[RMDB]
This 177-nucleotide RNA was probed chemically with 2A3 and DMS. DMS adducts were read by reverse transcription with MarathonRT. The DMS profile rests on 1,304 reads.
RNA sequence: GGGAACGACUCGAGUAGAGUCGAAAAUAUCCUCGUUUCGACGAGGAUAACAGAAAACUCAUGCCAAAUAAAACGCUGACAGGCAUGACAAAAGUCAGCGAAACAUACGGGUCUUCGGACCCGUAAAGUUUAAAGCUAGGUUCGCCUAGCUUUAAACAAAAGAAACAACAACAACAAC
Reactivity to 2A3 in 0.01 (KOAc 150mM, MgCl2 10mM, bicine 150mM(pH8.5), 24C), signal-to-noise 2, nucleotides 027 to 126: u050a020u010c000c000u010c000g000u000u060u120c160g120a020c000g000a040g000g000a000u000a000a010c000a020g240a050a140a020a050c050u020c040a000u030g030c030c030a100a180a000u180a040a180a060a070c020g010c000u020g010a000c020a010g000g030c080a130u090g060a010c060a010a110a010a000g000u000c010a000g000c000g030a090a020a000c030a010u060a020c000g030g000g040u000c020u060u050c130g090g000a000c020c020c010g000u000a010a000a000
Reactivity to DMS in 0.01 (KOAc 150mM, MgCl2 10mM, bicine 150mM(pH8.5), 24C), signal-to-noise 2, nucleotides 027 to 126: u000a030u010c000c010u000c000g010u000u000u000c160g050a020c000g010a010g000g010a000u000a010a080c120a160g010a070a070a090a130c140u000c000a120u000g000c020c000a110a130a110u000a030a100a090a120c060g010c000u000g000a020c020a080g000g020c010a010u000g000a050c220a020a030a110a110g010u000c000a000g020c000g010a100a070a110c160a130u000a000c010g020g000g000u000c010u000u020c170g010g010a000c000c020c000g000u010a010a030a090